Overview: This 207-nucleotide RNA was probed chemically with 2A3.

RNA sequence: GGGAACGACUCGAGUAGAGUCGAAAACUAUCAGCACGCAGUCCGCGAUUCUCCUGCCUAGGCGCACUUCGAAGAAGAUUCUGUGCUUAGCGCUAGACUCGACGGGCUGCCCUAGGUCCAGAAACAGGCUGAGGCCGCGAAGAGUCUUGAAGCCCAGCACCUACCGGAAAUUCGUUUCCGGUAGGUGAAAAGAAACAACAACAACAAC
Reactivity to 2A3 in 0.01 (KOAc 150mM, MgCl2 10mM, bicine 150mM(pH8.5), 24C), signal-to-noise 2, nucleotides 027 to 156: c030u060a060u130c030a020g130c060a000c080g020c000a000g000u000c000c060g000c030g010a020u030u010c010u050c050c100u050g000c000c000u010a010g020g000c000g040c010a000c020u040u030c080g220a210a140g050a070a000g010a130u080u090c060u120g000u010g000c000u000u030a010g000c030g030c170u020a010g000a010c000u030c020g180a210c000g040g000g000c000u010g000c000c000c010u040a020g000g000u010c030c010a030g040a010a170a080c080a020g120g000c010u010g020a140g040g000c000c020g030c040g000a120a120g020a030g050u060c010u050u070g080a080a010g050c030c010c010a010g030
Source: RMDB library OK3TST, as collected in RNAgym. Values cover nucleotides 27 to 156.